[RMDB]
RNA sequence: GGGAACGACUCGAGUAGAGUCGAAAAUGUUGAUACCUGGCAUCCAGAUGUGCGUUUCUUCGAGCUAUAUGAUGCCAGCGGUGAACUGCGCGGCAGCUUCUAUCUGGACUUAUAUGCCCGUGAACACAUGCUUGAAUAACUUCGGUUAUUCAAGCAUAAAAGAAACAACAACAACAAC
Reactivity to DMS in 0.01 (KOAc 150mM, MgCl2 10mM, bicine 150mM(pH8.5), 24C), signal-to-noise 4, nucleotides 027 to 126: u010g020u010u000g010a140u010a080c150c000u010g010g010c030a040u010c050c170a080g000a110u000g010u010g010c080g000u010u020u010c100u000u000c080g020a090g000c020u010a100u000a060u020g010a080u000g010c010c010a040g020c120g010g010u010g000a040a050c040u000g000c020g030c190g020g010c020a020g000c100u000u000c040u010a090u000c030u000g000g010a070c080u010u000a060u000a060u010g000c020c000c020g020u000g010a070a100c180a050c160
Reactivity to 2A3 in 0.01 (KOAc 150mM, MgCl2 10mM, bicine 150mM(pH8.5), 24C), signal-to-noise 2, nucleotides 027 to 126: u050g030u000u070g030a110u140a170c010c030u030g000g000c000a030u050c040c060a010g020a110u060g080u050g130c030g020u060u140u060c100u120u060c090g040a010g030c010u000a020u050a020u300g010a000u010g000c000c000a000g030c030g010g010u030g010a050a020c010u070g030c120g000c090g210g050c000a020g050c060u040u060c010u020a060u030c030u060g000g000a030c000u110u080a060u020a060u300g050c000c000c020g090u110g110a130a020c100a000c010